Conditions: 150 mM KOAc, 10 mM MgCl2 and 150 mM bicine (pH 8.5), 24 C.
An RNA of 177 nucleotides, treated with 2A3 and DMS and read out base by base.
Source: RMDB library TTRDEL, as collected in RNAgym.
Values cover nucleotides 27 to 126.
For DMS, 3,184 sequencing reads were counted.
2A3 adducts were read by reverse transcription with SuperScript II with manganese.
RNA sequence: GGGAACGACUCGAGUAGAGUCGAAAAGAUAUGGACGUCGAAGACAGUGUAGUAGCUACUCGGAAACGAGUAGACUACGCAGAUAUCGAGACGUCCUAAGUCAAAGUUCUUUCUUCGGAAAGAACAACAACUCAUUCCUGUUCGCAGGAAUGAGUUGAAAAGAAACAACAACAACAAC
Reactivity to 2A3 in 0.01 (KOAc 150mM, MgCl2 10mM, bicine 150mM(pH8.5), 24C), signal-to-noise 2, nucleotides 027 to 126: g000a010u040a030u100g000g000a030c010g010u020c010g040a100a030g050a050c110a110g150u070g140u300a300g000u020a020g040c010u010a010c000u000c000g040g000a040a020a030c000g000a000g000u000a000g030a120c000u000a000c000g000c010a030g070a110u130a040u090c030g000a030g000a030c000g010u000c000c010u000a040a000g000u010c030a030a090a100g000u000u000c000u010u000u000c010u060u050c230g100g020a000a000a000g000a000a020c000a010a000
Reactivity to DMS in 0.01 (KOAc 150mM, MgCl2 10mM, bicine 150mM(pH8.5), 24C), signal-to-noise 3, nucleotides 027 to 126: g000a030u000a190u010g000g000a030c000g020u010c000g000a170a130g020a020c050a030g010u000g020u010a040g020u010a010g000c000u000a010c000u000c000g020g010a060a070a100c010g010a010g000u000a000g000a090c010u000a000c010g020c020a080g010a190u000a060u000c000g000a300g000a020c000g010u000c000c000u000a010a050g010u000c030a090a090a140g000u000u000c000u010u000u000c000u000u010c180g020g000a010a010a010g010a000a000c000a080a090